[RMDB]
RNA sequence: GGGAACGACUCGAGUAGAGUCGAAAAGUAAGGCUUGGGGCCCGAGAGAAGUCGCUCUCUCUCGCCCUUUACGUCCUCUCAGGCAUAGAGAUGACCAUUUGCCUAGGGUGAGUCUUUAAGUAGACACAGCCUAUCUAUGGCGACGUAUAGGGGCACGGAAAGCUUAAAUGUUCGCAUUUAAGCUUUCAAAAGAAACAACAACAACAAC
Reactivity to DMS in 0.01 (KOAc 150mM, MgCl2 10mM, bicine 150mM(pH8.5), 24C), signal-to-noise 2, nucleotides 027 to 156: g010u010a140a050g010g030c020u000u000g020g020g040g050c000c020c070g020a150g000a070g040a020a160g010u000c050g010c110u010c020u010c000u000c040u000c080g000c000c000c000u000u000u000a010c040g010u010c020c020u000c010u000c060a080g010g020c020a060u000a120g000a050g010a120u010g010a100c030c130a210u000u010u000g010c030c000u000a080g010g000g000u000g020a300g040u000c010u000u000u000a130a250g010u010a090g030a030c010a080c050a220g000c010c030u000a230u000c200u000a060u000g000g010c050g000a020c010g000u000a050u000a040g050g030g000g060c050a090c150g010
Reactivity to 2A3 in 0.01 (KOAc 150mM, MgCl2 10mM, bicine 150mM(pH8.5), 24C), signal-to-noise 5, nucleotides 027 to 156: g050u060a060a060g050g020c060u050u080g050g030g100g040c060c030c040g000a000g000a000g000a120a070g060u050c020g040c010u030c000u000c000u000c000u020c050g040c000c000c020u000u010u000a000c010g000u000c000c000u000c000u060c140a000g000g000c010a010u040a030g070a010g040a120u110g050a050c060c080a240u080u100u050g000c000c000u000a000g010g000g020u010g010a020g000u000c000u000u240u070a300a300g300u120a060g050a000c010a000c010a030g000c000c000u040a090u220c030u060a070u150g010g010c000g010a000c000g000u000a000u000a010g030g000g010g010c040a000c060g050
An RNA of 207 nucleotides, treated with DMS and 2A3 and read out base by base. For DMS the reverse transcriptase was MarathonRT. The data come from the RNA Mapping Database (RMDB), library VIROID.